Record summary: The record gives the reactivity of an RNA of 177 nucleotides to 2A3 and DMS. The 2A3 profile rests on 1,666 reads. DMS (dimethyl sulfate) methylates the pairing face of unpaired adenines and cytosines. The DMS profile rests on 1,541 reads. For DMS the reverse transcriptase was MarathonRT. Source: RMDB library OK1LIB, as collected in RNAgym. The RNA was probed in 150 mM KOAc, 10 mM MgCl2 and 150 mM bicine (pH 8.5) at 24 C. Values cover nucleotides 27 to 126.
RNA sequence: GGGAACGACUCGAGUAGAGUCGAAAAAGGCCUGCAGCUGACGGUGUGCGCGGCGCGCGACGCUGUGGAGCAGAUGCAGUGUCGCCAGGAGGCAGGCGUACAGGCGAAGCAAGCGCGGAGGGGAGGGCCCAUGCAGGCUAUUCGUAGCCUGCAUGGGAAAAGAAACAACAACAACAAC
Reactivity to 2A3 in 0.01 (KOAc 150mM, MgCl2 10mM, bicine 150mM(pH8.5), 24C), signal-to-noise 2, nucleotides 027 to 126: a010g060g010c000c040u030g030c030a060g040c020u030g040a110c050g100g000u040g020u050g060c020g000c000g100g000c050g030c040g010c000g060a000c010g000c000u010g010u100g150g070a140g080c090a030g010a080u240g020c000a010g000u020g000u050c000g000c000c030a070g030g070a090g000g100c040a040g050g000c000g000u030a020c090a020g060g130c030g020a010a010g020c080a060a030g020c020g000c040g030g040a080g020g030g000g040a100g020g010g030
Reactivity to DMS in 0.01 (KOAc 150mM, MgCl2 10mM, bicine 150mM(pH8.5), 24C), signal-to-noise 1, nucleotides 027 to 126: a200g000g010c030c030u000g040c070a040g050c000u010g020a020c020g000g030u000g020u000g000c000g000c000g000g050c140g000c190g000c000g010a020c000g000c000u010g000u010g030g000a100g020c070a050g010a070u000g000c000a000g010u060g010u000c000g040c000c050a140g030g000a200g030g000c070a080g000g000c020g020u040a040c040a040g020g000c040g020a300a080g080c010a020a220g020c050g010c030g000g000a090g010g000g010g000a140g000g000g030